[RMDB]
RNA sequence: GGGAACGACUCGAGUAGAGUCGAAAAGAGAGAUGAACGGCGAAUUAUAAUUCAGGAUAGUCAUUCAUUAGCGUGUCGGUUCGCAGGUGGAUGGUGAAUUUAAAGAUCGACUAAGCAUGUAGUACCAAUGAUGAAAGGUUUUCGGACGCGGGUUCAACUGGCAUAUCUAGUUCGCUAGAUAUGCCAGAAAAGAAACAACAACAACAAC
Reactivity to 2A3 in 0.01 (KOAc 150mM, MgCl2 10mM, bicine 150mM(pH8.5), 24C), signal-to-noise 3, nucleotides 027 to 156: g080a000g000a000g000a020u050g000a070a010c020g060g030c010g030a020a020u130u090a090u160a160a130u090u140c080a050g010g040a050u040a070g040u060c000a020u080u000c000a020u030u190a030g010c020g010u030g030u040c020g020g010u050u030c020g000c010a010g020g000u020g030g000a030u030g010g020u090g030a010a030u050u090u100a150a100a020g010a030u050c010g040a020c050u040a060a030g020c020a050u080g020u090a030g010u010a030c010c050a040a030u060g020a030u040g030a070a010a050g030g020u060u070u070u060c020g030g020a020c000g000c060g100g010g000u020u030c000a030a040
Reactivity to DMS in 0.01 (KOAc 150mM, MgCl2 10mM, bicine 150mM(pH8.5), 24C), signal-to-noise 1, nucleotides 027 to 156: g010a100g020a120g020a110u010g000a010a020c060g040g000c030g000a110a150u000u010a070u020a040a210u020u010c060a120g040g040a120u010a080g020u010c020a070u000u000c050a060u000u000a170g020c000g010u000g000u000c080g010g020u000u000c030g010c030a140g070g040u000g000g000a080u000g010g000u000g030a040a100u020u010u000a090a050a150g020a050u000c020g000a070c020u010a050a080g020c040a090u010g020u010a120g020u010a040c010c010a030a110u020g020a120u010g020a040a070a100g000g020u000u000u000u000c020g000g010a040c030g020c030g110g020g040u000u020c020a060a190

This 207-nucleotide RNA was probed chemically with 2A3 and DMS. For 2A3 the reverse transcriptase was SuperScript II with manganese. The data come from the RNA Mapping Database (RMDB), library RSTRND. DMS adducts were read by reverse transcription with MarathonRT. Values cover nucleotides 27 to 156.